[RMDB]
RNA sequence: GGGAACGACUCGAGUAGAGUCGAAAACGUUGUCAUCGACAACACCCUAUGCAUUCAUGCUCUGUAAGGAUGCGCCGAAAGGUGAGCAAGCCGGAGUUGCCCAGACCUGAAAUGCAACACUUUAGAGAAAACCCGAAGCAGUUCGCUGCUUCGGGAACUAGUAUGUAAUCUUCGGAUUACAUACUAGAAAAGAAACAACAACAACAAC
Reactivity to DMS in 0.01 (KOAc 150mM, MgCl2 10mM, bicine 150mM(pH8.5), 24C), signal-to-noise 2, nucleotides 027 to 156: c110g040u010u000g020u020c000a150u000c070g010a080c000a030a030c030a110c040c000c000u010a140u000g010c000a070u020u020c040a210u010g010c000u020c030u010g040u020a290a170g000g010a030u000g020c030g000c030c000g000a100a120a090g030g040u000g000a110g020c040a140a120g030c070c030g010g030a140g000u000u000g020c010c020c050a110g010a120c040c020u000g000a050a060a050u010g000c020a030a080c030a120c060u000u000u000a100g010a180g000a070a090a120a210c010c000c060g030a020a050g030c010a050g020u000u000c300g030c000u000g010c020u010u000c000g000g020g000a000a010
Reactivity to 2A3 in 0.01 (KOAc 150mM, MgCl2 10mM, bicine 150mM(pH8.5), 24C), signal-to-noise 5, nucleotides 027 to 156: c080g000u000u010g020u020c120a240u120c300g030a010c010a020a000c010a060c000c000c000u030a060u070g000c010a010u000u000c050a040u150g010c020u010c010u010g040u020a000a030g000g010a000u010g000c010g000c010c000g070a110a040a020g020g010u030g040a010g010c030a020a040g050c030c020g050g040a130g040u040u050g040c010c010c030a040g030a120c010c020u090g040a080a080a030u080g030c020a070a000c020a060c080u140u210u230a120g010a020g030a070a100a040a060c030c000c000g000a000a010g000c000a000g000u040u140c190g040c120u000g000c000u000u000c000g000g000g000a000a000
Notes:
Conditions: 150 mM KOAc, 10 mM MgCl2 and 150 mM bicine (pH 8.5), 24 C. The record gives the reactivity of an RNA of 207 nucleotides to DMS and 2A3. DMS adducts were read by reverse transcription with MarathonRT. For DMS, 3,289 sequencing reads were counted. For 2A3, 3,783 sequencing reads were counted.